This 177-nucleotide RNA was probed chemically with DMS and 2A3. The reactions ran in a buffer of 150 mM KOAc, 10 mM MgCl2 and 150 mM bicine (pH 8.5), at 24 C. 2A3 is a SHAPE reagent: it acylates the 2'-hydroxyl of flexible nucleotides of all four kinds. Reactivities are rounded to 0.1 and cut off at 0 and 3. Reactivities are given for positions 27 through 126. For 2A3 the reverse transcriptase was SuperScript II with manganese.

[RMDB]
RNA sequence: GGGAACGACUCGAGUAGAGUCGAAAAGUUGAGGCAUUACCCUACUUCUGUAUCUUACCUUGUGUAGUAGUAGCUCUGCCUCUAAGGUGGGAAAGAAAGUCCAAAGAAUGCCCCACAGGGCAUCCAGGAACAGGAAAUCUUUCGAGAUUUCCUGUUCAAAAGAAACAACAACAACAAC
Reactivity to DMS in 0.01 (KOAc 150mM, MgCl2 10mM, bicine 150mM(pH8.5), 24C), signal-to-noise 4, nucleotides 027 to 126: g010u020u000g010a030g010g000c020a030u010u000a080c110c210c000u000a040c040u000u000c020u000g000u000a060u030c080u010u010a060c150c140u000u000g030u000g020u000a040g020u000a020g030u010a100g010c120u000c170u000g010c010c010u000c020u000a030a050g010g010u000g020g010g000a030a070a050g000a080a050a090g010u000c060c050a070a100a090g000a030a010u000g000c010c010c000c260a100c300a150g010g010g000c030a010u000c040c030a180g030
Reactivity to 2A3 in 0.01 (KOAc 150mM, MgCl2 10mM, bicine 150mM(pH8.5), 24C), signal-to-noise 2, nucleotides 027 to 126: g050u050u030g010a050g030g000c030a030u040u170a110c010c010c000u020a010c010u000u020c000u010g080u040a150u090c040u050u180a200c070c040u110u080g000u010g020u090a020g010u010a000g000u000a000g010c040u000c010u090g010c000c000u000c000u000a000a010g000g000u050g010g000g050a000a130a050g070a140a080a010g070u000c000c030a000a110a110g060a000a030u000g000c010c010c000c000a140c060a020g030g000g000c000a030u000c030c040a090g030